[RMDB]
RNA sequence: GGGAACGACUCGAGUAGAGUCGAAAAACGACGUGAGCAUUUCUACCGUCUAGUGGAAGAUGAAGAGUCUGACUAUGCAACACGACCUCACUUGAUCAUGUUUCUUAUGAUGUCGAUUCAGAACCCACUGAAGGAAGGAGUGCAAUGUCGCAUUAGGAUCAUAAGUAGCGUUCGCGCUACUUAUGAUAAAAGAAACAACAACAACAAC
Reactivity to DMS in 0.01 (KOAc 150mM, MgCl2 10mM, bicine 150mM(pH8.5), 24C), signal-to-noise 4, nucleotides 027 to 156: a040c000g020a020c030g010u000g010a280g050c040a030u000u000u000c020u000a250c020c000g000u000c020u000a060g040u000g030g010a080a080g010a300u020g000a090a090g000a250g020u000c020u000g020a300c300u010a110u010g000c030a030a050c010a050c040g010a040c000c000u010c160a140c240u000u010g000a030u000c050a040u000g010u000u000u000c020u000u000a100u000g010a160u000g010u000c010g000a150u000u000c020a080g000a150a210c090c010c010a090c020u000g010a050a020g020g030a200a040g020g010a060g030u000g030c030a080a020u000g010u000c010g000c010a080u000u010a160g010g010
Reactivity to 2A3 in 0.01 (KOAc 150mM, MgCl2 10mM, bicine 150mM(pH8.5), 24C), signal-to-noise 9, nucleotides 027 to 156: a000c010g010a000c010g020u040g040a170g020c000a000u000u030u000c010u030a100c010c010g040u030c090u100a010g000u010g040g030a120a090g140a270u070g020a040a030g010a010g050u020c040u080g020a020c010u050a040u130g000c030a020a010c010a010c050g030a030c020c030u170c050a190c110u100u230g030a100u080c020a030u040g030u030u050u020c020u030u090a050u090g050a020u050g020u020c000g020a020u010u010c000a010g030a070a060c000c010c000a000c000u010g020a060a010g040g000a020a010g000g000a000g000u000g000c000a010a000u020g000u000c000g000c010a020u080u190a080g110g050
The record gives the reactivity of an RNA of 207 nucleotides to DMS and 2A3. For 2A3 the reverse transcriptase was SuperScript II with manganese.